[RMDB]
RNA sequence: GGGAACGACUCGAGUAGAGUCGAAAAGAAGAGAAGCGCGCGAAUUGGAAACCAGCGAACCAUAUUACGCGCGCAAGGAACCGGGCCUUGGUUCGUUGGAAAGAAUAGAUAAUAUCGCUGGUAAAGAAGCAUUUUAUUACUUCGGUAAUAAAAUGCUAAAAGAAACAACAACAACAAC
Reactivity to 2A3 in 0.01 (KOAc 150mM, MgCl2 10mM, bicine 150mM(pH8.5), 24C), signal-to-noise 4, nucleotides 027 to 126: g120a050a000g100a020g040a170a010g030c020g000c030g020c000g020a030a020u050u000g000g040a030a080a140c000c000a000g000c000g000a040a050c010c000a030u050a040u210u090a080c000g000c000g000c000g000c000a000a000g030g000a020a010c010c030g050g090g010c020c020u050u050g010g000u020u030c020g030u060u100g050g010a020a070a020g040a030a060u180a110g150a040u140a120a070u080a110u070c010g000c030u010g000g010u020a070a050a000g090a020
Reactivity to DMS in 0.01 (KOAc 150mM, MgCl2 10mM, bicine 150mM(pH8.5), 24C), signal-to-noise 3, nucleotides 027 to 126: g000a170a120g000a220g020a150a210g010c040g050c000g020c000g000a040a050u020u000g000g010a150a110a070c020c000a000g010c030g000a020a290c010c040a020u030a000u000u010a130c020g020c000g000c000g060c000a000a040g000g040a070a040c030c010g040g000g020c030c010u020u000g000g030u000u000c050g030u000u000g000g020a050a050a070g010a100a070u010a080g000a070u020a040a080u030a170u000c010g020c000u000g000g010u030a050a080a130g000a180